The record gives the reactivity of an RNA of 170 nucleotides to DMS and 2A3. DMS adducts were read by reverse transcription with MarathonRT. The RNA was probed in 150 mM KOAc, 10 mM MgCl2 and 150 mM bicine (pH 8.5) at 24 C. The 2A3 profile rests on 23,700 reads. For 2A3 the reverse transcriptase was SuperScript II with manganese. Values cover nucleotides 27 to 129.

[RMDB]
RNA sequence: GGGAACGACUCGAGUAGAGUCGAAAACUCCCCGUUCCUGGAGAAGGGAGACUCGGGAACGCCUAGCAUCUGAGGGACGAAGCCGCCCCCGGGCGCUCCCCUCGGAGAUCCACUGGGUGGGUUCACACAACUUUGACCUUCGGGUCAAAGAAAAGAAACAACAACAACAAC
Reactivity to DMS in 0.01 (KOAc 150mM, MgCl2 10mM, bicine 150mM(pH8.5), 24C), signal-to-noise 7, nucleotides 027 to 129: c120u000c010c000c000c040g030u000u050c020c010u050g020g000a060g040a060a060g070g030g020a090g030a080c060u000c030g000g010g000a020a080c100g020c030c030u000a060g020c110a100u020c020u000g000a050g070g000g010a110c090g030a110a200g030c080c060g030c080c030c010c080c160g000g010g010c060g080c040u010c010c000c000c000u030c020g010g020a050g060a050u040c130c020a130c030u020g000g010g060u020g010g000g010u030u000c070a050c140a140c130a100a090
Reactivity to 2A3 in 0.01 (KOAc 150mM, MgCl2 10mM, bicine 150mM(pH8.5), 24C), signal-to-noise 7, nucleotides 027 to 129: c040u020c010c000c000c000g000u010u000c010c000u060g100g030a060g000a070a080g030g040g010a030g020a010c020u020c010g020g020g020a040a020c020g020c000c030u060a040g010c010a100u010c010u020g010a020g010g000g010a020c070g100a070a010g020c080c030g050c010c020c000c000c010g020g010g000c010g000c010u010c000c000c000c000u000c010g000g000a010g010a040u030c020c020a050c050u050g050g000g030u040g020g030g010u090u070c050a050c010a010c000a090a110
It was measured as part of the RMDB library 15KLIB.